Record summary
The data come from the RNA Mapping Database (RMDB), library OK3TST. This 207-nucleotide RNA was probed chemically with DMS and 2A3. The RNA was probed in 150 mM KOAc, 10 mM MgCl2 and 150 mM bicine (pH 8.5) at 24 C. For 2A3, 2,902 sequencing reads were counted.
[RMDB]
RNA sequence: GGGAACGACUCGAGUAGAGUCGAAAAAACGGAGCCUGACCUACGUGGGACAGCGCUCCGCCUUCGGCAGCAGGCUCGGUGACUUCCAGGCGCUUCGGUUCAAGCUGGCCGACAUGGCCACCGAGCUGGAGGCCGCCCGCACCCUGCUGUGGCGGGCACUCCCAUCAUAAUUCGUUAUGAUGGGAGUAAAAGAAACAACAACAACAAC
Reactivity to DMS in 0.01 (KOAc 150mM, MgCl2 10mM, bicine 150mM(pH8.5), 24C), signal-to-noise 2, nucleotides 027 to 156: a060a020c010g000g010a030g020c020c020u000g010a160c020c020u000a080c260g030u000g020g000g000a180c010a040g030c110g030c000u010c000c000g000c000c020u000u000c050g020g030c010a070g000c050a150g010g030c000u000c060g020g000u010g000a040c010u000u000c030c030a200g030g020c040g020c050u020u000c020g050g000u000u000c100a080a100g010c050u010g030g020c000c010g000a130c190a100u000g020g010c000c000a080c040c000g000a100g050c010u000g000g000a050g000g030c000c010g010c010c000c040g020c020a110c050c020c000u010g010c040u000g010u000g010g000c060g000g010g020c080
Reactivity to 2A3 in 0.01 (KOAc 150mM, MgCl2 10mM, bicine 150mM(pH8.5), 24C), signal-to-noise 4, nucleotides 027 to 156: a000a000c040g010g000a010g000c010c000u010g020a060c000c010u100a110c250g090u300g020g010g070a110c010a000g010c020g030c080u010c010c010g000c000c000u170u080c010g040g020c000a020g010c010a010g100g000c010u010c070g000g020u030g010a030c010u040u020c040c010a020g110g020c210g020c130u060u050c040g030g030u030u180c060a100a070g040c120u080g040g000c010c000g080a210c130a230u300g010g000c000c000a010c020c030g010a000g010c000u000g000g000a000g010g000c000c000g000c020c010c000g010c020a070c010c010c060u060g010c070u060g030u050g040g090c000g010g000g010c000